[RMDB]
RNA sequence: GGGAACGACUCGAGUAGAGUCGAAAAGGAAGGACGGAAAGACCCCGUGAACCUUCACUGCAGCUUGGCAUUGGCCGCUGGUCCGGCGCGUAGAGGAUAGGCGGGAGGCAUCGAUGCGGGGGCGCCACGGACAUGAGAGAUUCGUCUCUCAUGUCCGAAAAGAAACAACAACAACAAC
Reactivity to DMS in 0.01 (KOAc 150mM, MgCl2 10mM, bicine 150mM(pH8.5), 24C), signal-to-noise 2, nucleotides 027 to 126: g000g010a020a020g010g000a100c020g030g010a080a100a080g030a140c130c050c020c050g010u030g000a090a150c040c020u000u010c030a160c130u040g000c070a050g000c030u040u030g010g000c060a120u020u000g010g040c050c000g000c020u010g000g000u000c020c050g010g000c080g000c070g010u010a170g010a180g000g000a090u010a060g000g000c040g000g000g010a060g000g000c090a060u030c060g000a100u030g000c040g010g000g000g020g020c020g000c000c070a170
Reactivity to 2A3 in 0.01 (KOAc 150mM, MgCl2 10mM, bicine 150mM(pH8.5), 24C), signal-to-noise 3, nucleotides 027 to 126: g100g010a040a020g020g030a040c050g000g070a020a140a110g110a080c010c000c000c000g020u040g060a040a040c000c000u020u010c030a040c100u080g030c020a060g010c020u110u120g020g010c000a110u020u150g100g020c060c030g000c010u020g020g000u040c020c000g020g020c020g010c020g050u070a020g030a060g100g080a100u130a070g010g040c000g030g030g000a040g030g000c040a040u070c080g060a020u120g000c010g000g000g010g000g000c000g000c000c010a090

Record summary
This 177-nucleotide RNA was probed chemically with DMS and 2A3. For DMS the reverse transcriptase was MarathonRT. The RNA was probed in 150 mM KOAc, 10 mM MgCl2 and 150 mM bicine (pH 8.5) at 24 C.